RNA sequence: GGGAACGACUCGAGUAGAGUCGAAAAGGGCUCAGUAGCGAUUCACCCCAAAAUAGAGAGGCCAGGAGCAUGUUUCGCCUGACCUUAUUGGUUCACUUUGAAGAUAAGGCUGUGACUGAGGAGCUCCCCGCCAGAUCGCUUUCGAGCGAUCUGGCGGAAAAGAAACAACAACAACAAC
Reactivity to 2A3 in 0.01 (KOAc 150mM, MgCl2 10mM, bicine 150mM(pH8.5), 24C), signal-to-noise 1, nucleotides 027 to 126: g050g000g000c000u000c000a120g000u080a000g000c000g030a090u100u070c000a040c000c050c000c030a000a160a000a000u300a020g060a000g060a040g130g010c000c000a000g000g010a030g000c160a000u080g000u030u010u020c000g000c000c020u060g110a150c000c020u020u010a010u000u150g070g030u030u060c020a030c260u230u170u270g140a070a010g000a030u060a040a120g070g070c040u080g050u170g080a070c010u000g000a040g090g040a040g020c020u010c000c000